[RMDB]
RNA sequence: GGGAACGACUCGAGUAGAGUCGAAAAGAAAAAGCUUAGGUGACCGUCUGUUGUACAAAUAAGACUACAUCCAAGUUUAAGAUGUCAACAGGUAAGAUUUGUCGUCGACGGUGUCUAAGCGAAGAAAGGGUAACUAUUAGUUCGCUAAUAGUUACCCAAAAGAAACAACAACAACAAC
Reactivity to DMS in 0.01 (KOAc 150mM, MgCl2 10mM, bicine 150mM(pH8.5), 24C), signal-to-noise 4, nucleotides 027 to 126: g010a090a090a060a040a100g000c010u000u000a020g000g040u030g030a020c000c000g030u000c000u060g030u000u030g000u070a010c010a040a000a040u010a090a090g000a090c040u000a040c030a020u010c040c160a090a160g050u060u090u040a150a050g000a050u000g000u010c300a060a110c180a050g000g020u020a060a110g010a030u000u010u000g000u000c060g010u010c060g010a020c000g000g010u000g000u010c000u000a000a000g010c010g010a030a070g020a080a090a130
Reactivity to 2A3 in 0.01 (KOAc 150mM, MgCl2 10mM, bicine 150mM(pH8.5), 24C), signal-to-noise 6, nucleotides 027 to 126: g150a000a080a010a000a010g020c010u010u000a020g030g070u070g280a110c000c000g020u040c090u220g060u190u160g070u130a000c000a000a010a000u020a010a020g060a030c000u010a000c020a010u000c030c040a040a050g020u040u100u140a050a010g000a000u030g050u060c100a050a060c050a150g060g080u100a090a020g040a240u010u000u010g000u000c010g000u010c010g000a000c010g000g000u000g000u000c000u000a000a000g000c000g020a010a000g010a040a050a010